[RMDB]
RNA sequence: GGGAACGACUCGAGUAGAGUCGAAAAACGAGUCCGUACGCGGACUCGAAGGGCCCCAGAAGACCAAGGGUCCCAAACCUACCACUCAUUAGAUGCAUGGAAAUCACUAGGUGAUACGUCACCUAGAACACGCUUUUAAGCUUCGGCUUAAAAGCAAGAAUUCCAUUAGCUUCGGCUAAUGGAAUUCAAAAGAAACAACAACAACAAC
Reactivity to 2A3 in 0.01 (KOAc 150mM, MgCl2 10mM, bicine 150mM(pH8.5), 24C), signal-to-noise 2, nucleotides 027 to 156: a000c000g000a000g000u010c000c000g010u000a010c190g010c010g050g020a000c000u000c000g010a000a000g020g000g000c010c000c000c010a090g110a300a030g040a140c050c090a100a050g000g000g000u000c010c000c000a070a080a070c010c040u070a060c000c050a020c080u090c040a050u040u290a130g050a130u140g110c110a040u110g040g160a070a110a120u160c110a090c070u000a000g000g000u010g010a000u010a070c270g030u010c000a000c000c000u000a000g010a020a020c030a010c060g010c000u000u000u000u000a000a000g000c020u010u080c130g020g000c000u000u000a000a000a000a000g000c000a000a010